[RMDB]
RNA sequence: GGGAACGACUCGAGUAGAGUCGAAAAAUCCAGUUUAUAGGAAUACAAGGAACAGACAGAGCAACGUGAUACCAUGGGAACGUAACCCAAAAAAGAAUAUGGGAAACUAUUUGGUAUAGUUUCUUCUGCAAACAAAUUGCUAGGAAAAGAGGAGGAACCAUUAGUGAGAGUUCGCUCUCACUAAUGGAAAAGAAACAACAACAACAAC
Reactivity to 2A3 in 0.01 (KOAc 150mM, MgCl2 10mM, bicine 150mM(pH8.5), 24C), signal-to-noise 3, nucleotides 027 to 156: a000u000c000c000a000g010u020u100u060a260u140a050g010g060a050a060u080a090c060a060a050g010g020a060a030c010a030g060a020c000a020g010a020g020c020a010a050c040g010u040g050a020u040a050c020c060a050u060g030g000g020a130a020c060g050u080a020a060c000c000c040a120a000a040a000a000a000g050a060a000u140a060u120g030g000g020a000a040a000c020u010a060u100u090u150g060g000u180a040u030a030g000u030u000u000c000u060u040c030u040g020c010a030a130a090c030a030a130a090u080u070g020c030u080a020g000g040a050a090a050a020g030a020g030g000a000g010g000a030a030
Reactivity to DMS in 0.01 (KOAc 150mM, MgCl2 10mM, bicine 150mM(pH8.5), 24C), signal-to-noise 2, nucleotides 027 to 156: a090u030c030c020a220g010u000u000u000a180u010a100g030g020a220a070u010a060c030a060a070g010g000a080a080c050a180g000a060c060a070g010a110g000c050a070a050c060g030u020g000a180u000a050c000c010a080u000g000g010g000a080a080c100g020u020a060a110c020c010c050a000a040a070a070a070a080g000a120a110u010a070u010g000g010g000a030a020a040c010u000a010u000u020u000g030g010u010a060u010a010g000u000u000u000c010u000u000c070u000g010c030a060a060a170c060a040a040a140u000u000g000c020u010a150g010g000a050a050a040a020g000a110g030g010a070g010g010a100a160